Conditions: 150 mM KOAc, 10 mM MgCl2 and 150 mM bicine (pH 8.5), 24 C. Structure probing data (2A3 and DMS) for a 207-nucleotide construct. DMS adducts were read by reverse transcription with MarathonRT. The 2A3 profile rests on 2,975 reads.
RNA sequence: GGGAACGACUCGAGUAGAGUCGAAAAGACCGGCUGAGCAGGUAUUUUCAAAGGAUGCGAUGAAGACUUACGCGCAUCGCCCGAUGACCAAUGACCAUCCAUCUGUGGCAGUGAAUGCCGAAAACUGGAAGGAUUAUGCAGUCGGUCAGACUGGCGGCCAUUAUGAAAAUUUCGAUUUUCAUAAUGGAAAAGAAACAACAACAACAAC
Reactivity to 2A3 in 0.01 (KOAc 150mM, MgCl2 10mM, bicine 150mM(pH8.5), 24C), signal-to-noise 5, nucleotides 027 to 156: g000a000c000c000g010g010c010u040g000a010g060c060a050g050g000u050a050u040u150u050u090c020a030a010a010g040g020a040u150g000c020g030a030u040g040a080a040g070a090c080u190u160a080c210g000c030g000c040a000u000c000g010c000c000c000g030a050u070g010a030c020c060a050a050u100g070a060c000c010a010u010c010c010a030u040c050u060g110u130g060g000c000a010g000u040g300a300a120u030g010c000c000g030a090a070a030a040c030u040g010g020a030a050g030g000a030u030u030a040u260g030c000a000g000u010c000g010g000u010c000a000g020a020c030u070g070g040c010g080g000
Reactivity to DMS in 0.01 (KOAc 150mM, MgCl2 10mM, bicine 150mM(pH8.5), 24C), signal-to-noise 2, nucleotides 027 to 156: g040a040c000c000g000g160c010u010g010a110g060c050a090g010g010u000a060u000u000u030u010c070a050a090a140g000g020a090u010g030c010g000a110u000g000a070a150g000a150c100u010u010a080c110g030c050g000c020a020u000c020g010c020c010c030g030a140u000g010a080c040c040a050a080u020g010a110c020c000a100u000c000c010a090u000c040u000g020u020g020g030c000a070g000u000g010a090a140u000g000c020c000g020a070a030a060a070c110u000g030g030a100a090g000g000a080u000u000a050u010g010c010a040g030u000c020g000g020u010c010a060g010a070c020u000g000g000c020g050g010
For 2A3 the reverse transcriptase was SuperScript II with manganese. Values cover nucleotides 27 to 156.